The record gives the reactivity of an RNA of 207 nucleotides to DMS and 2A3.
DMS adducts were read by reverse transcription with MarathonRT.
The RNA was probed in 150 mM KOAc, 10 mM MgCl2 and 150 mM bicine (pH 8.5) at 24 C.
The data come from the RNA Mapping Database (RMDB), library OK3TST.
For DMS, 4,968 sequencing reads were counted.

RNA sequence: GGGAACGACUCGAGUAGAGUCGAAAACGAUCAGUACGUUCGCGUACUGAUCGAAGCUACUGGAGACAGUAGCAAGUCGCAGACCUUGUUUGGCGGUAACAAGGAAACCAAUAAGUAGGCAGGUCUUAUUGACUGCGACAACCGCCAUCCUGCCUUAUAGUAAGAUAGGAUUCGUCCUAUCUUACUAAAAAGAAACAACAACAACAAC
Reactivity to DMS in 0.01 (KOAc 150mM, MgCl2 10mM, bicine 150mM(pH8.5), 24C), signal-to-noise 2, nucleotides 027 to 156: c050g010a020u000c000a020g020u000a000c000g050u000u000c300g040c050g010u000a000c000u000g010a010u000c010g010a030a100g020c010u000a010c000u010g010g050a300g000a300c000a020g020u000a010g030c010a040a070g030u000c010g000c030a050g000a300c000c000u010u000g020u000u000u020g020g000c050g050g000u000a050a070c010a040a050g020g000a050a070a110c000c030a030a000u010a030a040g000u010a070g000g000c000a020g010g020u000c020u010u010a010u000u000g000a140c010u010g030c000g010a050c050a050a110c090c040g000c080c070a080u010c000c000u000g000c000c000u010u000a140
Reactivity to 2A3 in 0.01 (KOAc 150mM, MgCl2 10mM, bicine 150mM(pH8.5), 24C), signal-to-noise 3, nucleotides 027 to 156: c010g000a000u000c000a000g000u000a000c010g010u020u100c230g000c000g060u000a000c000u000g000a000u000c000g010a000a000g000c000u000a000c000u000g000g000a040g010a020c000a000g000u010a000g000c000a000a010g020u000c000g000c010a010g010a110c000c000u000u000g030u010u040u070g080g060c030g040g050u050a020a000c000a000a000g010g000a030a030a030c000c000a000a000u010a000a000g020u040a110g010g000c000a000g020g000u010c010u010u010a000u000u020g040a050c010u020g000c000g000a000c000a010a050c030c050g040c020c000a010u050c000c000u000g010c010c000u020u050a060